RNA sequence: GGGAACGACUCGAGUAGAGUCGAAAACUCUGACGCUUCGGCGUCAGAGAAACCUCUAAGCAGAUUGGCGAGGACGACGCUGCGGAGCGCCUUUGCCAACAAAAACGCAUAGAUUCGUCUAUGCGAACAUUGAUGACCGUUUCGACGGUCAUCAAUGAAAAGAAACAACAACAACAAC
Reactivity to 2A3 in 0.01 (KOAc 150mM, MgCl2 10mM, bicine 150mM(pH8.5), 24C), signal-to-noise 1, nucleotides 027 to 126: c010u020c000u020g000a000c000g030c000u050u070c270g120g000c000g000u000c000a020g000a000g000a000a000a000c010c000u000c080u150a090a080g000c080a050g080a300u050u030g000g000c010g000a020g010g020a050c070g020a040c000g080c080u260g100c090g250g060a060g010c070g000c000c000u010u030u140g000c000c010a000a010c020a000a060a000a000a020c000g000c000a000u000a010g020a060u000u080c160g040u000c120u000a010u010g030c000g010a010a000
Reactivity to DMS in 0.01 (KOAc 150mM, MgCl2 10mM, bicine 150mM(pH8.5), 24C), signal-to-noise 1, nucleotides 027 to 126: c010u000c000u000g010a020c000g040c000u010u020c280g010g000c000g020u000c000a000g000a020g020a020a080a110c000c030u000c210u000a180a060g030c190a120g010a210u000u000g000g000c000g000a040g010g000a090c030g030a120c070g000c090u000g020c260g030g010a070g010c010g010c020c010u000u000u000g030c000c000a010a010c110a010a040a070a170a120c030g000c000a010u000a000g000a050u000u000c180g050u000c000u000a000u000g020c000g050a010a120
Chemical mapping of a 177-nucleotide RNA with 2A3 and DMS. It was measured as part of the RMDB library M2PK50. DMS adducts were read by reverse transcription with MarathonRT. The 2A3 profile rests on 1,337 reads. High 2A3 reactivity points to a flexible backbone, as in loops and unpaired stretches. Reactivities are rounded to 0.1 and cut off at 0 and 3. Conditions: 150 mM KOAc, 10 mM MgCl2 and 150 mM bicine (pH 8.5), 24 C.